[RMDB]
RNA sequence: GGGAACGACUCGAGUAGAGUCGAAAAUUGUAGGAGGCCAUUAGUUUGUACUGUGCUCCUGUAAUGGACCCAACAGACCAAACAAAUAUGGAGUCACUCAUGCUAAAUGCAAUUAACUUGGGAGUAUACUCCUAAGUUGCAAAAAGUGGUAACAAAACCUAAUAGCGGAGUUCGCUCCGCUAUUAGGAAAAGAAACAACAACAACAAC
Reactivity to 2A3 in 0.01 (KOAc 150mM, MgCl2 10mM, bicine 150mM(pH8.5), 24C), signal-to-noise 2, nucleotides 027 to 156: u060u010g010u020a010g000g020a010g060g050c080c010a030u140u070a090g120u140u240u300g190u200a030c030u040g030u060g050c000u000c000c000u000g000u020a020a020u020g030g020a040c030c010c000a000a020c060a040g100a080c040c050a110a120a070c030a050a160a010u160a130u150g070g000a070g040u070c020a000c020u030c030a080u110g020c020u080a080a130a060u100g040c040a030a150u160u090a100a060c000u000u000g010g020g000a010g030u090a070u110a300c000u000c000c000u000a000a000g000u010u000g000c000a140a000a000a000a000g030u030g050g030u030a050a010c020a050a070a020a040
Reactivity to DMS in 0.01 (KOAc 150mM, MgCl2 10mM, bicine 150mM(pH8.5), 24C), signal-to-noise 1, nucleotides 027 to 156: u000u020g020u000a110g000g000a050g020g030c070c020a050u000u000a080g020u000u010u000g000u010a110c020u000g000u010g000c020u020c000c000u000g030u000a030a110u010g000g000a060c010c000c020a060a140c070a080g000a150c130c030a080a050a150c030a100a030a160u000a020u000g030g040a230g030u000c040a040c030u000c040a110u000g020c020u010a030a040a130u020g010c050a090a110u000u000a050a040c000u000u000g010g030g000a000g060u000a180u000a160c000u000c000c000u000a010a040g000u020u000g000c070a010a030a070a150a080g030u000g010g000u000a050a170c050a030a060a050a170
The record gives the reactivity of an RNA of 207 nucleotides to 2A3 and DMS. For 2A3, 1,226 sequencing reads were counted. The RNA was probed in 150 mM KOAc, 10 mM MgCl2 and 150 mM bicine (pH 8.5) at 24 C. For 2A3 the reverse transcriptase was SuperScript II with manganese.